Record summary: This 177-nucleotide RNA was probed chemically with DMS and 2A3. The data come from the RNA Mapping Database (RMDB), library OK2TRN. For DMS the reverse transcriptase was MarathonRT. 2A3 adducts were read by reverse transcription with SuperScript II with manganese.
[RMDB]
RNA sequence: GGGAACGACUCGAGUAGAGUCGAAAACAUGCCGCUCGGGGCGCUGCUGGCGAAAGAAAGCGUGAUGACGUGGCCCGUCGGCUCGCACGGCUCCACCUACGGCGGCAACCCGGUCGCGGCGGCGGCCGUCAAAUCUCAUGUUCGCAUGAGAUUUGACAAAAGAAACAACAACAACAAC
Reactivity to DMS in 0.01 (KOAc 150mM, MgCl2 10mM, bicine 150mM(pH8.5), 24C), signal-to-noise 4, nucleotides 027 to 126: c120a120u010g020c020c010g030c010u020c040g000g000g000g000c300g000c020u000g020c030u010g000g010c060g010a080a110a090g000a080a130a100g010c020g030u010g010a120u010g000a060c030g020u000g000g010c250c040c090g000u010c070g000g000c020u000c050g010c020a060c050g000g000c030u000c080c030a040c100c030u000a110c100g000g010c010g030g000c020a020a120c010c010c000g020g010u000c100g000c040g000g020c060g000g000c070g020g000c070c070
Reactivity to 2A3 in 0.01 (KOAc 150mM, MgCl2 10mM, bicine 150mM(pH8.5), 24C), signal-to-noise 4, nucleotides 027 to 126: c010a050u100g000c010c010g010c020u060c050g020g030g010g010c020g020c020u030g000c030u060g050g030c090g090a120a120a090g090a040a090a010g080c020g040u030g040a180u140g040a040c030g040u090g050g010c040c010c010g130u100c080g020g030c030u020c030g060c010a060c040g060g000c030u040c030c010a080c010c020u080a080c030g020g020c000g000g000c010a010a010c000c000c000g010g040u180c070g000c020g040g000c000g030g010c020g020g030c020c020